RNA sequence: GGGAACGACUCGAGUAGAGUCGAAAACAUAAAAUUUUCAACUGCAAUGUUGAGGUUAGUCUCACCUCAAAAGUGCUUUACCUUCUACCUGAAGGGUCAGAUGAUCCAAAUAAGGUGACACUAAGCAAAAUUCGACACAUUAUGCUUGACAAGGAGGAAUGGGAGCAGUAUUCGUACUGCUCCCAUUAAAAGAAACAACAACAACAAC
Reactivity to DMS in 0.01 (KOAc 150mM, MgCl2 10mM, bicine 150mM(pH8.5), 24C), signal-to-noise 2, nucleotides 027 to 156: c030a100u010a060a040a090a150u000u000u010u000c020a120a050c050u050g030c080a080a110u000g050u000u000g040a060g020g040u000u010a060g020u010c040u000c040a080c020c000u010c010a050a040a100a050g010u010g020c030u000u010u010a080c020c000u010u000c070u020a100c090c030u000g010a090a120g010g010g040u000c010a140g000a170u020g000a050u000c020c000a060a080a150u010a070a060g000g010u000g010a000c090a030c020u000a070a100g030c140a030a040a060a100u000u000c030g040a130c090a040c110a070u000u000a090u000g020c010u000u020g020a130c120a080a120g020g000a090g050g010
Reactivity to 2A3 in 0.01 (KOAc 150mM, MgCl2 10mM, bicine 150mM(pH8.5), 24C), signal-to-noise 5, nucleotides 027 to 156: c030a030u300a160a080a140a180u210u230u120u130c100a090a060c080u120g030c050a060a080u130g020u040u020g010a020g000g030u050u040a080g090u010c020u020c070a020c010c000u020c010a010a040a050a030g030u020g050c020u070u080u090a090c010c000u020u010c030u060a140c030c010u050g030a080a160g010g000g010u010c010a060g060a300u300g010a010u110c010c000a010a070a170u070a100a030g000g000u010g010a000c010a000c040u090a030a010g010c010a010a060a090a070u120u210c100g160a040c040a000c000a140u060u090a070u150g030c000u020u040g020a060c050a110a040g050g010a010g000g030